RNA sequence: GGGAACGACUCGAGUAGAGUCGAAAAGCGAGCUGAUCGCGGGCGGCAUGGACGAGGCGAAGGUGCUGCGCGUGCUCGGCCUCGCGUCGACGCAGAACCUGAACAAGGCGGACCCGCUCGAUCCGGACACCUGAUAUGGUUUCGACCAUAUCAGGUGAAAAGAAACAACAACAACAAC
Reactivity to 2A3 in 0.01 (KOAc 150mM, MgCl2 10mM, bicine 150mM(pH8.5), 24C), signal-to-noise 4, nucleotides 027 to 126: g010c010g000a000g010c010u020g030a030u030c010g000c000g030g090g000c000g010g000c020a040u090g130g080a080c060g070a110g090g170c130g060a080a040g090g000u020g000c000u010g000c230g020c010g020u030g000c010u010c010g030g000c020c010u010c020g000c010g010u000c010g000a030c010g000c030a030g010a130a060c000c000u020g040a060a030c060a120a050g030g020c020g020g020a050c020c010c020g020c020u040c020g040a050u020c010c000g030g030a020
Reactivity to DMS in 0.01 (KOAc 150mM, MgCl2 10mM, bicine 150mM(pH8.5), 24C), signal-to-noise 5, nucleotides 027 to 126: g030c010g010a050g010c030u010g000a040u000c030g010c010g010g000g000c010g010g000c030a050u010g020g020a250c060g010a130g010g020c070g020a100a230g000g010u000g000c000u000g000c010g000c060g020u010g000c120u000c020g000g020c090c050u010c050g030c020g010u000c010g000a050c040g010c070a080g010a120a130c020c000u000g000a110a090c150a130a040g010g000c010g000g000a150c100c040c030g010c100u000c030g010a080u010c010c020g000g000a300

An RNA of 177 nucleotides, treated with 2A3 and DMS and read out base by base. The reactions ran in a buffer of 150 mM KOAc, 10 mM MgCl2 and 150 mM bicine (pH 8.5), at 24 C. Reactivities are given for positions 27 through 126. For DMS, 6,503 sequencing reads were counted.